[RMDB]
RNA sequence: GGGAACGACUCGAGUAGAGUCGAAAACCUGAGUUAAACUUUUACUGGGAGUUAAAUUUUAACUCAUGGUGACGUGGGCGAAUCUCGAACGUUCGUUUCUGGAUCCAACGGUAGUUUCCAAGUUUCCACAUGCCGUUCGAUUCGUCGAACGGCAUGUAAAAGAAACAACAACAACAAC
Reactivity to 2A3 in 0.01 (KOAc 150mM, MgCl2 10mM, bicine 150mM(pH8.5), 24C), signal-to-noise 3, nucleotides 027 to 126: c000c000u000g000a000g000u020u000a010a020a030c070u020u010u020u010a030c030u060g080g240g130a230g020u050u040a010a010a020u040u020u000u000a000a000c000u000c010a060u260g000g000u050g020a070c150g050u100g140g030g000c000g060a050a020u030c020u010c010g000a060a020c110g090u100u060c000g000u010u020u000c020u000g020g020a010u060c060c020a070a020c070g050g100u080a050g050u050u040u020c030c000a070a030g000u000u000u000c010c010

The record gives the reactivity of an RNA of 177 nucleotides to 2A3. 2A3 is a SHAPE reagent: it acylates the 2'-hydroxyl of flexible nucleotides of all four kinds. Conditions: 150 mM KOAc, 10 mM MgCl2 and 150 mM bicine (pH 8.5), 24 C. Source: RMDB library RFM100, as collected in RNAgym.